Chemical mapping of a 177-nucleotide RNA with 2A3 and DMS.

[RMDB]
RNA sequence: GGGAACGACUCGAGUAGAGUCGAAAAUUUGAUCCAUUAUAAGCUGCGUGACUCGGAGAUGGUUUUGCAUAAAUCUGCAAUACCUCAUGCUGGGAUUAGUAGAUGGAUACAAGCUGAUGCAUAUAAGCAACCUGGAUUCGUUCGCGAAUCCAGGUUGAAAAGAAACAACAACAACAAC
Reactivity to 2A3 in 0.01 (KOAc 150mM, MgCl2 10mM, bicine 150mM(pH8.5), 24C), signal-to-noise 1, nucleotides 027 to 126: u000u020u020g070a030u080c000c000a020u170u110a080u090a300a060g000c030u070g020c000g060u060g090a090c000u010c100g010g010a090g000a030u130g000g000u010u000u000u000g000c010a010u150a200a280a120u110c040u100g010c000a000a060u000a020c030c030u010c020a150u290g110c010u100g060g050g040a100u020u030a010g030u010a040g000a090u030g060g020a000u090a280c010a030a030g020c110u060g030a100u190g030c040a010u080a050u070a130a050g090
Reactivity to DMS in 0.01 (KOAc 150mM, MgCl2 10mM, bicine 150mM(pH8.5), 24C), signal-to-noise 1, nucleotides 027 to 126: u050u000u000g000a080u020c000c000a020u020u010a170u000a080a110g020c050u000g000c050g010u000g020a150c040u020c060g030g030a020g020a030u020g020g000u000u000u000u000g020c000a050u000a120a020a050u030c300u020g020c000a030a000u000a020c000c000u000c040a070u000g010c020u000g010g000g000a150u020u000a100g010u010a090g020a060u000g020g000a050u000a210c020a040a100g030c080u000g020a100u000g050c070a090u000a190u020a050a120g000
Conditions: 150 mM KOAc, 10 mM MgCl2 and 150 mM bicine (pH 8.5), 24 C. Reactivities are rounded to 0.1 and cut off at 0 and 3. DMS adducts were read by reverse transcription with MarathonRT.